RNA sequence: GGGAACGACUCGAGUAGAGUCGAAAAUCAUCAUGAUCUUUAUUUAAUUAUCAGGAAUAUAUCCCUUAAGUUAGAUAGUUUGACACCUUUUUGAGCUUGCCGGAUGAUCCAACAGUUGUGGCUCAGCUUGGUCAUCUAUUUCAACCUUCACAAAUUAGUAAUCGCCAUAAUUCGUUAUGGCGAUUACAAAAGAAACAACAACAACAAC
Reactivity to 2A3 in 0.01 (KOAc 150mM, MgCl2 10mM, bicine 150mM(pH8.5), 24C), signal-to-noise 1, nucleotides 027 to 156: u060c000a020u000c010a030u020g120a030u020c000u130u090u130a300u180u250u270a170a050u010u120a000u050c020a020g000g030a010a010u020a000u000a020u120c000c000c000u080u190a070a010g030u000u010a000g020a010u000a000g040u020u130u050g030a060c050a210c020c060u040u130u020u090u080g060a000g000c000u070u130g060c040c000g200g030a170u030g030a070u140c050c080a020a070c000a100g030u130u120g060u300g020g010c000u000c020a010g020c020u010u010g030g000u000c000a000u000c000u000a020u030u020u070c020a020a000c000c020u130u270c060a080c040a180a070a300u020u080a050